[RMDB]
RNA sequence: GGGAACGACUCGAGUAGAGUCGAAAACGAGUAUCGGAUUUAGACACAGGAUAAGUGAUGUCCCCAGCAGAAUAAGCAUCUAUUGGACAAUAGUAAAACCGGGAUACAUACUUUUGAUUAACAGCACAGUCGUAGUAUCCUUCGGGAUACUACGACUAAAAGAAACAACAACAACAAC
Reactivity to DMS in 0.01 (KOAc 150mM, MgCl2 10mM, bicine 150mM(pH8.5), 24C), signal-to-noise 2, nucleotides 027 to 126: c010g000a070g000u000a050u010c030g040g000a070u000u000u000a060g000a060c080a030c140a100g000g000a220u020a060a020g010u020g030a080u000g000u000c020c000c010c060a100g000c030a060g000a040a060u000a130a060g010c070a040u020c000u060a040u000u000g000g040a080c220a070a030u000a050g000u020a090a060a180a080c140c140g000g000g000a020u000a120c130a060u000a080c020u000u020u000u000g000a090u030u000a070a050c100a040g010c200a070c200
Reactivity to 2A3 in 0.01 (KOAc 150mM, MgCl2 10mM, bicine 150mM(pH8.5), 24C), signal-to-noise 2, nucleotides 027 to 126: c000g050a000g000u070a080u130c000g020g030a000u000u130u130a080g060a000c000a010c030a050g080g080a060u040a160a010g080u070g010a160u000g010u000c000c000c000c000a000g050c000a000g030a060a090u150a190a000g000c000a000u000c000u060a070u040u000g110g000a040c040a030a000u030a080g030u020a050a030a030a030c090c060g000g000g070a000u000a040c020a020u130a000c000u070u050u020u040g120a150u260u050a210a000c020a000g010c070a020c070